[RMDB]
RNA sequence: GGGAACGACUCGAGUAGAGUCGAAAAGGGAACCCCUAUCAGUUAGGCGGAAUCAAUAAAGUUGGUUUACAGAGACGACAAGUAAGUUUUGAAACACGUUUGGCUUUGAUCAAGGUGUUUAAGAAAGACCCUGUUUAGCUUUCGAGCUAAACAGGGUAAAAGAAACAACAACAACAAC
Reactivity to DMS in 0.01 (KOAc 150mM, MgCl2 10mM, bicine 150mM(pH8.5), 24C), signal-to-noise 1, nucleotides 027 to 126: g010g020g020a140a150c010c010c000c080u010a090u000c060a100g010u000u020a040g000g010c060g020g000a050a050u000c050a010a000u020a050a060a170g030u000u000g000g040u010u000u000a090c140a060g030a110g000a060c040g010a100c080a050a120g030u020a110a110g010u030u000u010u000g000a060a060a080c100a070c010g000u000u020u000g010g040c020u000u010u010g020a090u000c080a000a080g010g020u000g000u000u000u010a050a080g010a070a090a080g010
This 177-nucleotide RNA was probed chemically with DMS. It was measured as part of the RMDB library OK2TST.